[RMDB]
RNA sequence: GGGAACGACUCGAGUAGAGUCGAAAAGCAUGGGAUCCGUACCACAUGGAUGAGGUACCAUGUCUAGGGUACCAUGCGAUGAUCCGAGCUAGACUGAUCCGCGUACUAGGGAUCGAUCCUAGGACGUAUAGCGGUUGAGAUUCGUCUCAACCGCUAUAAAAGAAACAACAACAACAAC
Reactivity to DMS in 0.01 (KOAc 150mM, MgCl2 10mM, bicine 150mM(pH8.5), 24C), signal-to-noise 4, nucleotides 027 to 126: g010c000a010u000g000g000g010a040u020c000c020g010u010a110c300c250a040c010a020u000g010g020a160u000g000a160g010g010u010a160c010c020a000u010g010u000c050u000a100g000g010g010u000a040c000c000a010u000g020c000g010a140u010g000a060u000c010c010g000a060g000c040u000a080g010a100c080u010g000a050u010c030c100g000c030g020u000a020c040u000a040g010g000g000a130u010c180g030a110u000c010c020u000a000g000g010a020c040g020u010
Reactivity to 2A3 in 0.01 (KOAc 150mM, MgCl2 10mM, bicine 150mM(pH8.5), 24C), signal-to-noise 3, nucleotides 027 to 126: g000c000a000u000g000g000g040a050u040c020c000g050u080a090c040c010a020c010a030u040g000g040a120u110g160a110g120g150u150a080c000c000a000u010g000u020c030u060a080g030g020g000u020a020c000c000a000u000g000c000g000a030u100g020a010u000c040c020g010a010g010c020u100a080g050a160c040u040g040a090u040c060c030g050c020g030u040a070c030u030a000g050g040g060a090u120c110g030a080u100c010c010u010a000g000g020a010c010g030u040

Notes:
This 177-nucleotide RNA was probed chemically with DMS and 2A3. For 2A3 the reverse transcriptase was SuperScript II with manganese. For 2A3, 3,632 sequencing reads were counted. For DMS the reverse transcriptase was MarathonRT.